Chemical mapping of a 207-nucleotide RNA with 2A3. The data come from the RNA Mapping Database (RMDB), library M2RFPK. Conditions: 150 mM KOAc, 10 mM MgCl2 and 150 mM bicine (pH 8.5), 24 C. Values cover nucleotides 27 to 156.
RNA sequence: GGGAACGACUCGAGUAGAGUCGAAAAGUCGGAACAUAACGACGGCGGGCCGGUGGGGAAUCAGGGGGCUACCGUGGUAUAGCGAUGAGACAGCCCCUCCGAUGGCACCAAGCGUCGGAUCGCGGAAAACACUGUAAGCCCUUCGGGGCUUACAGAACGUAGAAAAACUGUUCGCAGUUUUUCUACGAAAAGAAACAACAACAACAAC
Reactivity to 2A3 in 0.01 (KOAc 150mM, MgCl2 10mM, bicine 150mM(pH8.5), 24C), signal-to-noise 1, nucleotides 027 to 156: g020u030c030g050g010a180a110c080a120u250a150a050c080g010a020c020g000g020c080g020g000g030c020c030g050g070u080g000g000g000g120a010a060u120c030a020g020g010g020g000g030c010u000a050c020c010g040u080g070g070u290a190u210a160g010c040g040a040u030g050a070g050a080c030a020g010c000c010c010c000u030c000c000g080a040u050g090g030c040a000c040c000a090a020g060c000g020u050c020g000g000a030u060c030g000c060g110g060a000a090a010a000c060a030c000u000g010u000a010a000g000c000c000c000u010u040c090g030g000g020g000c000u000u000a000c000a000g000a010a000